[RMDB]
RNA sequence: GGGAACGACUCGAGUAGAGUCGAAAAAAUUAUGAACUUAUCGUUUACUUGUUUGUCUUAUGAUCUAAAGUAAGCGAGACAUUAAAACAUAAGACUAAACUGUAGAAGCUGUUUUACCAAUCCUUUAUGGAAACGGGUUCGAUUCCCGUCAUCUCCACAGUGGUAUCAUGUUCGCAUGAUACCACUGAAAAGAAACAACAACAACAAC
Reactivity to DMS in 0.01 (KOAc 150mM, MgCl2 10mM, bicine 150mM(pH8.5), 24C), signal-to-noise 1, nucleotides 027 to 156: a060a090u010u010a040u000g030a070a070c040u000u010a050u000c050g020u000u000u000a000c040u000u000g010u020u000u000g040u000c030u000u000a110u000g020a080u010c110u030a030a040a090g020u000a010a070g010c010g010a080g010a190c110a190u000u000a050a020a070a090c030a090u010a050a050g000a190c040u010a050a090a040c050u020g030u010a110g000a070a300g010c000u000g000u000u000u020u020a180c100c020a040a190u000c000c020u010u000u000a080u040g040g060a020a080a040c050g010g000g000u000u000c050g040a300u000u020c000c040c000g020u000c040a040u010c000u030c010c010a180
Reactivity to 2A3 in 0.01 (KOAc 150mM, MgCl2 10mM, bicine 150mM(pH8.5), 24C), signal-to-noise 3, nucleotides 027 to 156: a010a010u260u150a140u070g020a060a000c020u110u080a070u090c000g010u040u000u020a010c010u040u080g050u160u110u080g040u050c010u030u260a120u150g040a090u050c070u210a080a050a080g020u010a060a000g020c000g000a020g030a000c020a050u130u230a080a060a010a000c010a000u010a030a000g020a010c020u060a070a030a000c040u070g030u130a030g030a100a010g090c050u040g100u060u000u060u040a050c020c030a030a060u070c040c030u150u200u150a050u130g010g000a060a020a000c000g000g020g000u080u040c030g020a020u070u030c000c000c000g010u010c010a070u010c010u010c000c000a030